RNA sequence: GGGAACGACUCGAGUAGAGUCGAAAAGCGUACUACGCUGAUAACCAUGAGCAACAGCUUAUAUGACCCAUAUCCCAAAUAGGAUAUGGGAGUAUAAGACAUGCUCAUGAUGAAAUCAGCGUAUCGCAAAAGUAGAUAAACUUCGGUUUAUCUACAACCAAUCUCAAAUGUUCGCAUUUGAGAUUGGAAAAGAAACAACAACAACAAC
Reactivity to DMS in 0.01 (KOAc 150mM, MgCl2 10mM, bicine 150mM(pH8.5), 24C), signal-to-noise 2, nucleotides 027 to 156: g000c000g010u000a050c160u000a000c010g020c040u030g010a010u000a180a060c000c000a010u000g000a010g030c010a070a070c100a130g000c000u000u000a010u000a020u000g030a250c000c000c000a000u010a020u000c000c010c010a130a200a200u000a040g010g000a030u000a010u010g020g010g010a240g000u000a010u000a020a000g000a020c070a300u000g010c000u000c010a020u000g010a010u000g000a140a300a090u000c000a020g040c030g060u020a010u000c070g010c010a120a080a130a160g020u010a020g000a040u000a010a010a010c010u000u000c300g070g010u000u000u010a000u000c000u010a010c010a040a150
Reactivity to 2A3 in 0.01 (KOAc 150mM, MgCl2 10mM, bicine 150mM(pH8.5), 24C), signal-to-noise 9, nucleotides 027 to 156: g000c000g000u040a090c050u000a000c050g000c000u000g000a000u010a060a090c010c000a000u010g000a010g000c010a010a150c080a110g050c030u030u010a020u000a000u260g300a300c000c000c000a000u000a000u010c020c010c010a230a300a150u300a150g000g000a000u000a000u000g000g020g000a000g000u000a000u000a000a010g070a140c010a030u040g010c010u000c000a000u000g000a010u050g060a080a200a040u000c000a000g000c000g000u010a010u120c010g000c000a080a070a010a040g000u000a000g000a000u000a000a000a000c020u050u060c230g010g000u000u000u000a000u000c000u000a000c000a010a010